[RMDB]
RNA sequence: GGGAACGACUCGAGUAGAGUCGAAAAGAUAUGGAUAACUCUUUUGACGCGUUCCUGUCGGAAACGACAGGAAACGCGAUAAGAGUGUCCUAAGUCAAAGCCUAACUGCGUUCGCGCAGUUAGGCAAUCAAUAAAAUUACUUCGGUAAUUUUAUUGAAAAAGAAACAACAACAACAAC
Reactivity to 2A3 in 0.01 (KOAc 150mM, MgCl2 10mM, bicine 150mM(pH8.5), 24C), signal-to-noise 2, nucleotides 027 to 126: g000a020u070a000u130g030g010a040u080a300a150c020u010c040u040u080u100u260g300a150c220g000c000g000u000u000c000c000u000g020u010c020g000g030a030a040a040c030g020a000c020a020g000g220a010a000a010c000g000c000g010a000u000a000a000g010a000g010u020g000u000c010c010u000a050a000g040u020c040a090a120a030g000c000c000u000a000a000c000u000g030c000g050u040u090c280g000c020g000c130a000g010u020u000a000g020g000c000a000a000
Reactivity to DMS in 0.01 (KOAc 150mM, MgCl2 10mM, bicine 150mM(pH8.5), 24C), signal-to-noise 3, nucleotides 027 to 126: g000a020u010a220u020g000g000a010u000a060a020c000u000c000u000u010u010u010g020a150c110g020c000g020u000u000c000c000u000g000u000c010g000g010a080a030a120c000g010a010c000a010g000g000a000a010a010c010g040c000g010a040u000a000a010g000a010g030u000g010u000c000c000u000a030a140g000u010c020a080a120a150g010c000c000u010a000a010c000u000g000c000g020u000u020c220g020c020g030c000a010g000u000u000a000g010g010c010a000a000

An RNA of 177 nucleotides, treated with 2A3 and DMS and read out base by base.
For DMS, 3,438 sequencing reads were counted.
2A3 adducts were read by reverse transcription with SuperScript II with manganese.